The record gives the reactivity of an RNA of 177 nucleotides to 2A3 and DMS.
For DMS, 12,731 sequencing reads were counted.
It was measured as part of the RMDB library TTRDEL.
Conditions: 150 mM KOAc, 10 mM MgCl2 and 150 mM bicine (pH 8.5), 24 C.
RNA sequence: GGGAACGACUCGAGUAGAGUCGAAAAGAUAUGGAUCUGGUGGUAGACCGCAAUUCGGAAACGAAUUGGAAGGUCUAUAAUCACCAGAGUCCUAAGUCAAACGAAACGUAGUUCGCUACGUUUCGAACAUUCCUAUUGGGUUCGCCCAAUAGGAAUGAAAAGAAACAACAACAACAAC
Reactivity to 2A3 in 0.01 (KOAc 150mM, MgCl2 10mM, bicine 150mM(pH8.5), 24C), signal-to-noise 4, nucleotides 027 to 126: g010a000u020a010u040g000g000a000u000c000u010g010g010u000g010g090u010a000g010a000c000c010g050c110a000a010u000u000c000g010g010a010a000a010c010g000a010a010u030u040g030g070a220a040g010g000u000c000u010a020u020a010a000u000c000a000c010c000a000g000a000g010u090c000c000u000a000a000g000u000c040a100a070a100c020g000a000a000a000c000g000u000a000g020u060u090c300g020c140u000a000c010g010u000u000u010c000g000a030a010
Reactivity to DMS in 0.01 (KOAc 150mM, MgCl2 10mM, bicine 150mM(pH8.5), 24C), signal-to-noise 6, nucleotides 027 to 126: g000a010u000a010u020g000g000a300u000c010u000g000g000u000g000g000u000a010g010a010c000c000g000c000a010a010u000u000c000g020g000a010a000a030c000g020a020a010u000u000g000g010a140a130g020g020u000c000u000a230u020a090a000u010c000a000c000c000a010g000a020g010u010c000c000u000a010a070g000u000c000a090a100a240c040g000a010a010a000c010g010u000a010g000u000u010c290g020c000u000a000c000g010u000u000u000c000g010a100a150